[RMDB]
RNA sequence: GGGAACGACUCGAGUAGAGUCGAAAAGUGAAAUCAGAAGGACAAUCGUCGUUUUGAUGAUAUACCUUCGCCUCUUUAGAGUAAGGACGAUCUUCAGAGUUGAGUCUUUGAUCUUAAUUUUUUUUAAGCUUUCUAUAUGAUUCGUCAUAUAGAAAGCAAAAGAAACAACAACAACAAC
Reactivity to 2A3 in 0.01 (KOAc 150mM, MgCl2 10mM, bicine 150mM(pH8.5), 24C), signal-to-noise 9, nucleotides 027 to 126: g100u090g060a040a040a040u130c060a070g010a010a000g030g000a030c100a070a130u050c080g030u000c080g040u040u070u200u300g010a010u000g000a000u000a000u020a030c000c000u000u010c010g010c000c000u060c000u040u100u090a050g010a030g020u070a050a040g050g020a020c030g030a050u010c010u130u090c110a070g040a040g170u130u100g050a030g050u010c000u030u030u060g040a050u010c020u060u090a180a220u110u040u040u010u010u010u020u110a100a010
Reactivity to DMS in 0.01 (KOAc 150mM, MgCl2 10mM, bicine 150mM(pH8.5), 24C), signal-to-noise 5, nucleotides 027 to 126: g000u000g000a070a100a070u020c080a090g000a010a000g000g030a050c110a080a040u020c090g020u000c000g010u010u010u030u030g000a020u010g000a030u020a140u020a060c030c000u010u000c000g000c100c030u010c060u010u010u000a100g000a050g000u020a040a060g000g010a060c050g000a100u010c030u010u010c150a100g010a080g000u010u000g000a200g010u000c010u010u000u010g000a050u010c030u010u010a040a000u010u000u000u010u020u000u040u010a070a210

Structure probing data (2A3 and DMS) for a 177-nucleotide construct.